[RMDB]
RNA sequence: GGGAACGACUCGAGUAGAGUCGAAAAGAUGGGCCGCUUCCGGCAAGAGGGGCCGAAAGUGUGAAGGGAGAGACCGCUCCGAGAGUUGGGAGAAGAAAGAGAGCGAAUGUGUCCGGAGGGAACCCCCAAGUGAGCGAUUUCGAUCGCUCAAAAAGAAACAACAACAACAAC
Reactivity to DMS in 0.01 (KOAc 150mM, MgCl2 10mM, bicine 150mM(pH8.5), 24C), signal-to-noise 7, nucleotides 027 to 129: g020a150u050g000g010g020c090c030g000c020u030u020c030c030g000g070c070a030a050g040a100g000g010g000g040c020c020g010a060a040a040g050u000g030u000g030a150a040g030g020g020a060g010a120g030a110c180c130g060c060u020c080c050g030a110g010a090g040u030u040g020g020g030a110g020a100a040g000a040a050a050g000a070g030a080g030c060g000a060a020u000g040u020g020u020c030c050g000g000a070g020g020g050a070a100c030c000c020c000c040a090a090g000
Reactivity to 2A3 in 0.01 (KOAc 150mM, MgCl2 10mM, bicine 150mM(pH8.5), 24C), signal-to-noise 4, nucleotides 027 to 129: g050a020u040g020g010g020c030c000g020c030u030u000c000c000g000g000c000a030a010g030a010g000g040g020g000c000c000g040a040a040a010g120u160g000u050g110a050a020g010g000g000a030g010a000g000a040c000c000g010c030u040c050c020g030a030g000a010g020u110u090g000g030g000a030g000a030a020g000a010a040a010g070a010g010a000g010c050g010a090a040u150g030u040g020u060c010c000g010g040a020g020g010g030a030a020c010c010c000c020c010a040a040g100

This 170-nucleotide RNA was probed chemically with DMS and 2A3. Reactivities are given for positions 27 through 129. The reactions ran in a buffer of 150 mM KOAc, 10 mM MgCl2 and 150 mM bicine (pH 8.5), at 24 C.